[RMDB]
RNA sequence: GGGAACGACUCGAGUAGAGUCGAAAAACAAUAGGAUGGCAAAAGGGGACCAUCGGGUCCGUCGUUCCAUCCUUUUCUUACCUUGUGGCCGGCAUGGCCCCAGCCUCCUCGCUGGCGCCGGCUGGGCGCUAAGCGAGGGCUUCGGCCCUCGCUUAGCAAAAGAAACAACAACAACAAC
Reactivity to DMS in 0.01 (KOAc 150mM, MgCl2 10mM, bicine 150mM(pH8.5), 24C), signal-to-noise 2, nucleotides 027 to 126: a040c160a030a030u000a010g000g000a010u010g010g010c220a030a030a090a140g020g020g020g010a020c000c000a200u010c300g020g000g000u000c000c000g010u000c060g010u000u000c000c010a000u000c000c010u000u000u000u000c070u010u000a170c060c030u000u010g010u000g020g000c000c010g000g020c020a050u010g030g010c040c110c000c000a020g000c000c100u000c170c130u010c180g000c020u000g000g010c260g000c000c010g010g000c020u000g010g010g000c080
The record gives the reactivity of an RNA of 177 nucleotides to DMS. For DMS, 1,970 sequencing reads were counted. Conditions: 150 mM KOAc, 10 mM MgCl2 and 150 mM bicine (pH 8.5), 24 C. Values cover nucleotides 27 to 126. It was measured as part of the RMDB library VIROID.